[RMDB]
RNA sequence: GGGAACGACUCGAGUAGAGUCGAAAAAAAUCUUCGAUUCCGAGUAGUCUGACUAUUGGUAUCGAGGUAAUCCAUCUUUAAAACCAUCGCCGUUAGAGGUUGCUUCUGAUUCAUUCGGUUAAGCGACUCAUCACAUUCUGUUCGCAGAAUGUGAUGAAAAAGAAACAACAACAACAAC
Reactivity to DMS in 0.01 (KOAc 150mM, MgCl2 10mM, bicine 150mM(pH8.5), 24C), signal-to-noise 4, nucleotides 027 to 126: a040a080a060u030c000u010u010c000g000a020u000u000c000c010g020a030g000u000a000g010u010c140u020g010a070c020u010a020u010u010g000g030u000a010u000c010g010a010g000g000u010a070a040u020c010c020a120u040c090u000u000u010a080a090a110a080c020c010a050u010c060g010c040c060g020u000u010a060g000a090g010g000u010u000g000c020u000u000c010u000g010a050u010u040c160a120u030u000c020g000g010u010u040a020a050g020c020g000a030c080
Reactivity to 2A3 in 0.01 (KOAc 150mM, MgCl2 10mM, bicine 150mM(pH8.5), 24C), signal-to-noise 7, nucleotides 027 to 126: a000a000a000u050c000u000u010c000g000a000u040u000c010c010g040a040g080u050a010g000u020c300u270g090a140c010u050a020u040u040g000g000u000a000u010c000g000a000g010g000u010a020a040u000c010c020a040u040c070u050u190u100a070a150a050a060c020c010a070u070c070g030c070c010g070u040u060a070g030a040g130g000u020u030g000c000u020u030c010u010g050a060u110u080c080a070u150u030c030g040g000u070u150a040a000g010c010g040a010c000
Overview
Source: RMDB libraries RFM100 and RFMREP, as collected in RNAgym. Structure probing data (DMS and 2A3) for a 177-nucleotide construct. The RNA was probed in 150 mM KOAc, 10 mM MgCl2 and 150 mM bicine (pH 8.5) at 24 C. For 2A3 the reverse transcriptase was SuperScript II with manganese.